[RMDB]
RNA sequence: GGGAACGACUCGAGUAGAGUCGAAAAUGGCUCAUGGUUCUGCAGGCUGUACAAGAAGCAUAGUGACUUCUGCUUCUGAGGAGGCCUCAGGAAGCUUCUAAUCAUGGCAGAAGGCAAAGGGGAAGCAGGCAUCUCACAUGGCAGGAGCAGGAGUGAACGUAGUGAUGGUAUUCGUACCAUCACUACGAAAAGAAACAACAACAACAAC
Reactivity to 2A3 in 0.01 (KOAc 150mM, MgCl2 10mM, bicine 150mM(pH8.5), 24C), signal-to-noise 4, nucleotides 027 to 156: u070g040g000c010u020c040a030u050g000g030u050u030c020u050g010c040a050g030g000c020u040g030u090a030c040a070a020g060a070a000g030c040a070u100a100g100u090g120a050c010u020u020c000u020g000c000u030u010c010u030g020a080g030g040a010g000g020c010c000u010c010a010g010g050a030a020g000c000u020u000c010u050a140a140u070c040a040u030g050g000c010a010g030a100a010g080g010c060a060a070a050g040g000g000g010a020a010g020c030a010g040g000c010a080u050c040u030c030a060c020a100u110g090g000c010a000g010g000a010g000c010a000g000g020a010g010u060g020a060a030
Reactivity to DMS in 0.01 (KOAc 150mM, MgCl2 10mM, bicine 150mM(pH8.5), 24C), signal-to-noise 3, nucleotides 027 to 156: u020g020g040c020u000c040a130u010g010g020u000u000c050u020g070c050a060g010g050c020u000g010u000a080c070a090a100g020a070a060g000c030a110u000a090g010u000g000a070c040u000u000c010u000g000c000u010u000c030u020g000a300g000g000a070g000g000c030c020u000c050a140g030g000a080a120g010c020u010u000c010u000a080a200u000c050a090u000g000g040c050a130g020a060a020g020g010c050a050a130a110g000g000g050g020a080a120g000c030a090g030g010c020a100u000c020u010c030a110c050a120u010g020g060c050a050g020g000a040g040c030a030g000g000a050g010u000g000a090a180
The record gives the reactivity of an RNA of 207 nucleotides to 2A3 and DMS. Source: RMDB library OK3TST, as collected in RNAgym. Conditions: 150 mM KOAc, 10 mM MgCl2 and 150 mM bicine (pH 8.5), 24 C. For DMS the reverse transcriptase was MarathonRT. Values cover nucleotides 27 to 156.